[RMDB]
RNA sequence: GGGAACGACUCGAGUAGAGUCGAAAAUCGAGUCUAACUCAAAAGAGUGGAACUAUUGUGUUGGACUACACAAUGAGAUAAACCUUUGUGACGAUCCUGAAAUCGUUCUUGAGAAACUGUUAGCUCUUAUUGCAUUCUUCUUGUCCAAACAUAACACGAUGUGCUCGUGGUUCGCCACGAGCACAUCAAAAGAAACAACAACAACAAC
Reactivity to 2A3 in 0.01 (KOAc 150mM, MgCl2 10mM, bicine 150mM(pH8.5), 24C), signal-to-noise 1, nucleotides 027 to 156: u110c010g000a000g100u000c000u080a100a000c000u050c050a040a010a080a000g100a010g030u120g070g010a090a090c020u040a110u040u020g020u000g010u030u030g000g000a000c020u020a000c040a000c020a000a020u120g030a070g000a120u030a100a200a110c050c000u050u030u100g160u030g080a030c000g000a020u000c010c060u100g100a240a070a000u010c010g040u080u030c000u100u140g010a090g050a000a210a020c040u100g040u120u050a010g000c000u000c030u050u080a140u040u170g020c080a070u060u050c020u110u000c050u070u140g000u000c000c000a030a090a000c080a010u270a050a010c030a010c250
Source: RMDB library OK3TST, as collected in RNAgym. The record gives the reactivity of an RNA of 207 nucleotides to 2A3. The 2A3 profile rests on 537 reads. The reactions ran in a buffer of 150 mM KOAc, 10 mM MgCl2 and 150 mM bicine (pH 8.5), at 24 C.